RNA sequence: GGGAACGACUCGAGUAGAGUCGAAAACAUUGUUCUGAUCAUCUGAAGAUCAGCUAUUAGAAGAGAAAUAUCAGUUAAGUCCUUUGGACCUGAUCAGCUUGAUACAAGAACUACUGAUUUCAACUUCAAAACGGGUGCUACUUCGGUAGCACCCGAACCUCAUUAUCUAGUUCGCUAGAUAAUGAGGAAAAGAAACAACAACAACAAC
Reactivity to DMS in 0.01 (KOAc 150mM, MgCl2 10mM, bicine 150mM(pH8.5), 24C), signal-to-noise 1, nucleotides 027 to 156: c040a150u010u000g050u000u010c000u010g010a020u000c000a090u010c100u040g000a120a240g010a030u000c010a010g000c210u000a100u000u000a210g020a070a080g010a300g000a070a090a050u000a040u000c010a050g000u000u010a120a050g020u000c000c010u000u000u000g020g010a000c020c020u020g000a100u010c080a140g040c090u000u010g000a090u000a090c030a010a050g010a020a020c000u010a070c010u010g000a010u010u000u000c050a070a170c010u030u010c010a050a020a040a110c020g000g060g060u000g000c000u000a010c010u000u000c300g070g020u000a000g010c000a000c000c000c040g000a010a040
Reactivity to 2A3 in 0.01 (KOAc 150mM, MgCl2 10mM, bicine 150mM(pH8.5), 24C), signal-to-noise 5, nucleotides 027 to 156: c040a050u150u170g040u190u070c010u000g000a000u000c020a020u030c090u180g140a170a040g010a040u010c010a000g000c010u120a110u300u140a090g010a050a000g030a000g040a020a050a050u170a030u030c000a010g000u050u130a130a010g000u050c010c050u110u130u210g050g020a060c040c050u090g030a100u070c020a030g150c020u090u110g010a010u090a180c060a060a040g030a060a020c030u060a010c010u070g010a030u010u040u050c080a160a100c010u000u010c020a000a040a060a080c020g000g000g000u000g000c000u000a000c000u010u030c080g070g000u000a000g000c000a000c000c000c000g000a010a000